Background
Structure probing data (2A3 and DMS) for a 177-nucleotide construct. 2A3 is a SHAPE reagent: it acylates the 2'-hydroxyl of flexible nucleotides of all four kinds. For DMS, 1,067 sequencing reads were counted.
[RMDB]
RNA sequence: GGGAACGACUCGAGUAGAGUCGAAAAGAUAUGGACCCUGCUAGGGAGAGCCUGUCGGAAACGACAGAAGCUCGAGGAUCUAGACAGGGUCCUAAGUCAAAACUGUGAUCUCUUCGGAGAUCACAGAGGCUGAGAUUAUGUUCGCAUAAUCUCAGCCAAAAGAAACAACAACAACAAC
Reactivity to 2A3 in 0.01 (KOAc 150mM, MgCl2 10mM, bicine 150mM(pH8.5), 24C), signal-to-noise 1, nucleotides 027 to 126: g010a000u100a010u140g000g000a000c000c000c000u010g000c010u030a020g060g020g050a110g000a010g040c000c010u030g000u010c000g000g070a070a120a050c000g030a000c010a010g110a240a020g000c000u000c000g010a070g040g070a060u010c020u010a030g300a300c010a000g000g000g000u000c000c000u000a010a000g020u000c010a010a000a070a090c010u000g000u010g010a000u000c020u010c000u010u060c300g160g000a010g020a010u020c010a010c000a000g030a030
Reactivity to DMS in 0.01 (KOAc 150mM, MgCl2 10mM, bicine 150mM(pH8.5), 24C), signal-to-noise 1, nucleotides 027 to 126: g020a050u000a300u000g010g000a020c000c010c000u000g000c010u000a000g000g060g020a050g020a020g010c040c000u000g010u000c000g010g010a090a030a250c000g020a020c010a010g030a130a100g010c000u000c010g010a110g030g000a070u020c010u000a020g010a080c000a020g000g010g010u010c000c000u000a010a010g050u000c040a040a070a090a270c040u000g040u000g000a000u000c000u000c000u000u030c220g020g000a020g000a050u000c000a010c000a000g010a080